[RMDB]
RNA sequence: GGGAACGACUCGAGUAGAGUCGAAAAGUCUAGCGAUUUAGGGAUCCGAUCCGGGUUGCAGAACUCAACUGCAUGAGUAGACACGCAAGUCGCGUAUUGGCCGACCGACCAAGGAUCUGCUAGACGAGCAUAAUUUAGUGUUCGCACUAAAUUAUGCAAAAGAAACAACAACAACAAC
Reactivity to DMS in 0.01 (KOAc 150mM, MgCl2 10mM, bicine 150mM(pH8.5), 24C), signal-to-noise 5, nucleotides 027 to 126: g000u000c000u000a010g020c030g010a050u000u000u000a180g010g000g000a120u010c030c010g000a060u000c050c020g020g000g010u000u010g020c020a050g000a110a070c070u000c090a040a110c120u010g020c190a110u000g010a050g010u000a070g010a150c300a060c110g010c020a050a050g010u000c070g010c110g000u010a050u000u000g000g020c140c070g020a150c070c040g000a070c130c110a090a160g000g000a010u000c000u000g020c000u000a010g000a010c000g000a110
Reactivity to 2A3 in 0.01 (KOAc 150mM, MgCl2 10mM, bicine 150mM(pH8.5), 24C), signal-to-noise 5, nucleotides 027 to 126: g010u010c010u000a000g010c010g040a030u000u070u170a150g040g000g020a030u000c010c020g000a010u000c030c010g010g020g040u000u010g000c010a010g020a090a040c010u010c040a050a090c090u230g040c100a110u030g010a010g020u100a050g050a050c050a020c140g020c020a050a050g300u030c020g000c040g040u080a040u040u050g030g000c010c050g070a080c010c020g070a080c040c040a080a030g040g000a010u000c060u050g000c000u010a010g000a000c000g000a010